[RMDB]
RNA sequence: GGGAACGACUCGAGUAGAGUCGAAAAUAUGCCUGCCACAUGGGAAUUCACAACCAAAUGUGUCUUUGUUCCAAUCGCCGUGUAAGCCCUAUACAGAGGAUAGGCUGGUUCGCUUAAAGAGAAUCUUUUCUAUGAUCAGGUCCGAAUCAUGUUGUACACUUAUCACUAAGUUCGCUUAGUGAUAAGUAAAAGAAACAACAACAACAAC
Reactivity to 2A3 in 0.01 (KOAc 150mM, MgCl2 10mM, bicine 150mM(pH8.5), 24C), signal-to-noise 3, nucleotides 027 to 156: u180a040u060g020c020c010u000g000c030c020a060c010a050u020g030g000g060a050a050u180u150c080a050c040a130a100c090c070a060a100a130u080g020u010g020u020c060u090u070u090g070u090u000c010c030a040a090u060c070g030c040c020g020u030g020u130a080a040g010c030c000c000u070a080u030a110c080a040g090a040g050g040a020u020a050g020g000c030u020g030g000u060u060c020g010c070u070u150a090a070a010g120a020g030a070a040u030c000u020u060u030u020c030u040a050u080g030a030u060c010a000g000g050u000c040c010g040a040a060u080c050a060u140g010u000u000g020u030a030c020
Reactivity to DMS in 0.01 (KOAc 150mM, MgCl2 10mM, bicine 150mM(pH8.5), 24C), signal-to-noise 2, nucleotides 027 to 156: u000a120u000g010c000c020u000g030c080c080a100c060a040u030g060g000g020a090a050u000u000c050a050c010a070a160c030c100a070a100a180u000g010u000g010u000c030u010u010u000g020u000u000c020c040a070a100u000c060g000c030c020g020u000g020u000a110a130g010c050c010c000u000a130u000a150c080a130g000a100g010g010a100u010a050g010g050c060u000g000g000u010u000c040g030c050u010u000a060a100a140g010a200g010a030a070u000c030u000u000u000u000c070u000a080u000g010a090u000c040a040g050g020u000c040c040g020a100a060u000c050a140u000g040u000u010g060u000a220c100